[RMDB]
RNA sequence: GGGAACGACUCGAGUAGAGUCGAAAAUGAGUAUCUCCGUGAGUCCAUGCAGUUGGAUUCCGUUAAGGUCGAGGGUGAAGUACUUGCUGACUUCCUUGAGGAACACAUGAUGCGUCCUACGGUUGCUGCUACGCAUAUCAUUGAGAUGUCUGUGGGACAAGGGGAUAUCGUUCGCGAUAUCCCCUUGAAAAGAAACAACAACAACAAC
Reactivity to DMS in 0.01 (KOAc 150mM, MgCl2 10mM, bicine 150mM(pH8.5), 24C), signal-to-noise 2, nucleotides 027 to 156: u010g020a170g030u000a070u000c010u000c080c040g020u010g000a040g000u000c010c020a100u010g030c260a130g000u000u000g030g010a060u000u000c000c000g000u000u010a060a050g050g030u000c050g010a170g010g010g030u000g000a060a090g020u010a050c040u010u000g010c030u000g010a140c080u000u000c010c000u020u000g010a110g030g020a190a030c040a110c060a160u000g020a210u010g020c070g020u000c020c010u000a060c070g030g020u020u020g020c010u020g010c000u000a060c060g020c020a140u010a070u000c030a110u010u000g020a080g010a050u000g020u000c030u000g070u000g010g000g020a150
Reactivity to 2A3 in 0.01 (KOAc 150mM, MgCl2 10mM, bicine 150mM(pH8.5), 24C), signal-to-noise 2, nucleotides 027 to 156: u290g010a020g070u040a080u030c050u060c040c040g120u220g090a000g020u030c010c000a020u050g110c040a050g120u050u080g120g000a060u100u050c000c000g080u020u130a110a070g030g050u060c080g010a070g060g130g020u120g020a050a060g050u050a050c030u070u130g050c060u110g050a000c000u080u130c030c010u000u100g050a130g040g040a140a000c100a000c000a200u270g020a060u090g050c080g000u000c010c020u080a090c040g010g000u050u010g000c020u020g030c030u110a000c100g000c030a000u020a020u080c060a070u100u140g030a070g010a010u010g020u010c010u080g070u110g020g010g000a000
Overview
This 207-nucleotide RNA was probed chemically with DMS and 2A3. For 2A3 the reverse transcriptase was SuperScript II with manganese.